An RNA of 177 nucleotides, treated with DMS and 2A3 and read out base by base. As a SHAPE reagent, 2A3 marks flexible, mostly unpaired nucleotides at the ribose 2'-OH. For 2A3 the reverse transcriptase was SuperScript II with manganese.
RNA sequence: GGGAACGACUCGAGUAGAGUCGAAAAGUACUGAGGUUCGCCUCAGUACAAAAGCAGAUCUGAGCCUGCGAGCUCUCUGCGUAACUAGGGAACGCAAUAAAAAAACGUGCAUGUUCGCAUGCACGAACGUGAAAUUAAACUUCGGUUUAAUUUCACGAAAAGAAACAACAACAACAAC
Reactivity to DMS in 0.01 (KOAc 150mM, MgCl2 10mM, bicine 150mM(pH8.5), 24C), signal-to-noise 6, nucleotides 027 to 126: g010u010a010c010u000g010a000g010g010u000u000c220g030c000c000u000c010a010g010u000a000c000a020a050a090a150g000c010a010g000a100u010c170u010g010a020g020c030c020u000g030c130g010a180g000c020u000c010u000c000u000g000c000g020u000a070a110c080u010a080g010g000g000a060a120c040g010c080a110a090u050a000a010a060a060a050a090a120c020g010u000g000c000a000u000g000u000u000c190g010c000a000u000g010c010a000c010g000a020a040
Reactivity to 2A3 in 0.01 (KOAc 150mM, MgCl2 10mM, bicine 150mM(pH8.5), 24C), signal-to-noise 7, nucleotides 027 to 126: g000u000a000c000u000g000a000g020g020u030u090c160g140c020c000u000c000a000g000u000a000c000a000a020a000a010g000c000a000g000a060u080c090u200g010a010g020c020c050u190g100c120g050a060g010c000u000c000u000c010u010g000c000g020u030a060a050c050u090a120g100g000g080a090a040c030g010c120a090a110u240a210a140a030a010a000a010a020c010g000u000g000c010a000u010g040u030u060c260g000c070a000u010g000c000a000c010g010a010a000
The 2A3 profile rests on 13,405 reads.